[RMDB]
RNA sequence: GGGAACGACUCGAGUAGAGUCGAAAAGAUAUGGAACCUACCACUCAGCAACAGCUCGGAAACGAGACAUGCUGGGUGGAGGUUCCUAAGUCAAAGAAUGCAAAACACUUCGGUGUUUUGCAUUCAAGACAAGGGGUAUGUUCGCAUACCCCUUGUCAAAAGAAACAACAACAACAAC
Reactivity to 2A3 in 0.01 (KOAc 150mM, MgCl2 10mM, bicine 150mM(pH8.5), 24C), signal-to-noise 2, nucleotides 027 to 126: g040a030u090a060u150g000g000a000a030c000c010u190a300c080c010a000c000u010c000a000g000c010a020a150c010a230g060c030u010c010g050g000a090a090a060c020g020a010g040a040c020a060u060g000c020u000g040g000g000u000g000g000a010g000g010u000u000c000c000u000a010a000g010u000c000a070a010a030g000a000a000u020g020c000a000a000a000a000c010a000c020u070u190c300g090g000u000g010u020u000u000u000g000c010a000u000u000c000a000a010
Reactivity to DMS in 0.01 (KOAc 150mM, MgCl2 10mM, bicine 150mM(pH8.5), 24C), signal-to-noise 2, nucleotides 027 to 126: g000a030u000a300u000g010g000a010a020c000c000u000a180c010c020a010c000u000c000a020g010c000a030a090c300a110g000c000u000c000g000g000a130a110a180c010g000a000g000a070c080a180u000g000c000u010g000g000g030u020g000g010a000g000g010u000u000c000c010u000a010a070g010u010c020a060a140a110g000a010a000u000g000c000a010a010a030a010c010a000c000u000u010c170g020g020u000g010u000u000u000u000g010c000a000u000u000c000a060a160